[RMDB]
RNA sequence: GGGAACGACUCGAGUAGAGUCGAAAAGAACACGUCUCGGGACGACGCUAAACUCGCCCUGGUCGGGGUGGGUUUAACGACCCCUCGGGUUUCCUAGUUCCUAAAACUAGGUGGUGGAGUCAUAUAAAAAACUUCUACACGUUCGCGUGUAGAAGAACAAUGGUUAUUUGUUCGCAAAUAACCAUUGAAAAGAAACAACAACAACAAC
Reactivity to DMS in 0.01 (KOAc 150mM, MgCl2 10mM, bicine 150mM(pH8.5), 24C), signal-to-noise 3, nucleotides 027 to 156: g000a110a120c050a080c040g000u000c030u010c000g000g000g030a100c060g040a300c020g000c020u020a010a050a060c040u000c010g030c000c000c000u000g020g040u010c150g030g010g010g020u010g010g030g020u000u000u000a020a070c030g000a120c010c020c070c010u000c050g000g020g010u000u000u000c020c010u000a030g010u000u000c020c070u020a070a020a040a030c030u000a040g010g020u000g010g010u000g000g010a180g010u000c110a110u000a150u050a000a040a070a080a060a080c000u000u000c000u000a000c010a020c000g000u000u000c300g030c020g040u000g000u000a000g000a000a000g000a080a080
Reactivity to 2A3 in 0.01 (KOAc 150mM, MgCl2 10mM, bicine 150mM(pH8.5), 24C), signal-to-noise 4, nucleotides 027 to 156: g070a050a030c050a000c100g060u060c030u080c090g040g040g020a030c140g030a060c000g030c050u010a000a010a000c000u010c000g000c010c010c020u120g070g220u230c180g000g000g020g000u040g010g000g000u000u020u020a010a000c000g040a040c000c010c000c020u070c030g060g000g000u010u040u000c000c000u000a010g000u010u030c030c040u120a010a020a010a010c010u010a020g010g000u010g030g020u050g050g060a070g050u090c060a060u110a020u300a200a080a000a010a040a090c000u000u010c000u000a000c000a010c000g030u050u070c220g010c000g110u000g000u000a000g000a000a000g000a000a000